Conditions: 150 mM KOAc, 10 mM MgCl2 and 150 mM bicine (pH 8.5), 24 C. An RNA of 170 nucleotides, treated with DMS and 2A3 and read out base by base. It was measured as part of the RMDB library 15KLIB. For 2A3 the reverse transcriptase was SuperScript II with manganese. For DMS the reverse transcriptase was MarathonRT.

[RMDB]
RNA sequence: GGGAACGACUCGAGUAGAGUCGAAAACACCGAGUUUGCCUCUAAUUCCUCGGUGUUGUCACUUGUUAACUUCACCGUUGAUCCUCAAAAAGCUUAUCUCGAUUUCGUCAAUGCGGGAGGUGCCCCAAUAGAGCUCGGUUCGCCGAGCUCAAAAGAAACAACAACAACAAC
Reactivity to DMS in 0.01 (KOAc 150mM, MgCl2 10mM, bicine 150mM(pH8.5), 24C), signal-to-noise 3, nucleotides 027 to 129: c000a060c070c020g000a040g000u000u020u050g050c070c000u000c100u040a130a170u000u000c100c000u000c050g000g020u020g000u000u000g010u010c080a080c030u050u060g000u050u010a040a030c160u010u000c080a060c130c040g060u000u000g030a060u010c040c000u030c070a030a040a070a140a140g010c120u020u020a140u060c020u020c030g010a130u030u040u040c090g000u030c120a010a010u050g020c000g040g000g030a000g040g000u020g010c010c010c010c020a100a050u100a110
Reactivity to 2A3 in 0.01 (KOAc 150mM, MgCl2 10mM, bicine 150mM(pH8.5), 24C), signal-to-noise 5, nucleotides 027 to 129: c000a000c030c000g020a000g020u020u080u060g100c010c000u070c040u080a100a140u180u100c000c010u000c030g000g000u020g000u010u030g050u030c030a020c130u020u090g020u110u130a050a010c010u050u040c020a020c020c010g020u010u020g000a010u000c010c000u050c060a010a010a050a040a020g050c060u060u050a080u170c020u020c010g110a100u030u100u040c040g050u050c080a080a040u100g030c000g000g020g000a010g010g040u000g000c010c000c010c000a020a060u110a060